[RMDB]
An RNA of 177 nucleotides, treated with 2A3 and DMS and read out base by base. Reactivities are rounded to 0.1 and cut off at 0 and 3. The reactions ran in a buffer of 150 mM KOAc, 10 mM MgCl2 and 150 mM bicine (pH 8.5), at 24 C. It was measured as part of the RMDB library OK2TST.
RNA sequence: GGGAACGACUCGAGUAGAGUCGAAAACGUGCGGCCAUAAAGGCUCUUCUUGCGGCCUUGAUGCGGCUUCAGGAAUACGCCGCAAAGCGCCGGGCUCAGCGUCAGCGCGUUGAUUGCGGAAAUGAGAUCCACUACUACUCUUCGGAGUAGUAGUGGAAAAAGAAACAACAACAACAAC
Reactivity to 2A3 in 0.01 (KOAc 150mM, MgCl2 10mM, bicine 150mM(pH8.5), 24C), signal-to-noise 2, nucleotides 027 to 126: c030g030u060g020c010g000g000c030c010a040u210a070a070a040g000g000c020u000c070u100u010c060u040u080g040c060g000g000c000c000u010u120g110a060u080g000c090g040g040c040u060u070c050a030g050g030a100a090u160a080c090g000c010c010g000c080a000a000a030g030c010g000c000c040g030g020g010c040u040c050a060g000c020g110u010c010a030g030c020g030c020g020u030u040g140a170u020u150g010c010g000g120a050a050a090u200g030a080g010a100
Reactivity to DMS in 0.01 (KOAc 150mM, MgCl2 10mM, bicine 150mM(pH8.5), 24C), signal-to-noise 4, nucleotides 027 to 126: c050g010u010g010c050g030g010c000c020a110u000a080a060a110g000g010c000u000c050u000u020c110u020u000g000c150g000g000c000c000u010u020g000a120u010g040c130g030g010c010u010u010c110a060g010g000a120a090u000a120c240g020c000c000g010c020a010a070a050g010c130g000c020c010g010g000g020c040u000c090a090g000c040g010u000c040a150g010c070g000c000g030u000u000g010a110u010u000g010c020g000g010a030a080a060u010g000a180g000a300